[RMDB]
RNA sequence: GGGAACGACUCGAGUAGAGUCGAAAAUCUCGUACACUCUCUCUCGUUCUCGAUCACGUACGUUCGUUCUCACUCGUACGAGUGAUCACACACGAGAUCUCGAGAGAGUGAACACGAGAACGAUCACACACGAACACACUCACGUGAACGAGAACGAAACGCAAUGAGGGUUCGCCCUCAUUGCGUUAAAAGAAACAACAACAACAAC
Reactivity to 2A3 in 0.01 (KOAc 150mM, MgCl2 10mM, bicine 150mM(pH8.5), 24C), signal-to-noise 1, nucleotides 027 to 156: u010c000u000c040g000u140a080c110a010c040u110c000u000c040u000c000u030c020g060u030u030c020u000c030g000a010u020c010a000c010g020u090a000c130g060u100u000c010g000u030u050c110u040c010a010c000u020c000g160u100a040c040g060a020g030u030g000a110u080c060a040c000a000c020a010c140g050a050g000a060u060c020u080c080g150a170g020a000g000a040g030u090g070a020a060c270a000c060g040a030g000a050a020c010g040a080u010c010a060c000a000c010a000c230g030a290a000c110a010c010a000c070u120c030a000c000g000u000g020a030a000c000g000a000g000a000a000c000g010a020